An RNA of 177 nucleotides, treated with 2A3 and read out base by base. For 2A3 the reverse transcriptase was SuperScript II with manganese. The reactions ran in a buffer of 150 mM KOAc, 10 mM MgCl2 and 150 mM bicine (pH 8.5), at 24 C.
[RMDB]
RNA sequence: GGGAACGACUCGAGUAGAGUCGAAAAUUUGGUUCCAUUGGAGAAUAGCUCUCUGCAGCUGUAACAAAACAAGGUGGGAUAUACGGGAAUUCAUGAUAGGGAAGCAUAGGUGGGAUUUAUGUAAAUCGUCCGUAGUCUGGUUCGCCAGACUACGGACAAAAGAAACAACAACAACAAC
Reactivity to 2A3 in 0.01 (KOAc 150mM, MgCl2 10mM, bicine 150mM(pH8.5), 24C), signal-to-noise 1, nucleotides 027 to 126: u040u030u220g040g030u050u070c000c000a000u200u140g130g000a090g120a120a090u060a100g000c000u040c000u000c030u040g000c240a010g000c000u000g040u150a130a060c010a040a010a000a010c000a070a050g000g000u090g040g070g000a000u030a000u000a280c000g110g050g000a090a090u080u040c000a040u170g130a030u040a150g000g030g020a000a000g130c030a000u000a090g010g000u090g090g030g040a000u000u060u000a100u120g050u000a000a060a220u010c070
Source information: The 2A3 profile rests on 408 reads.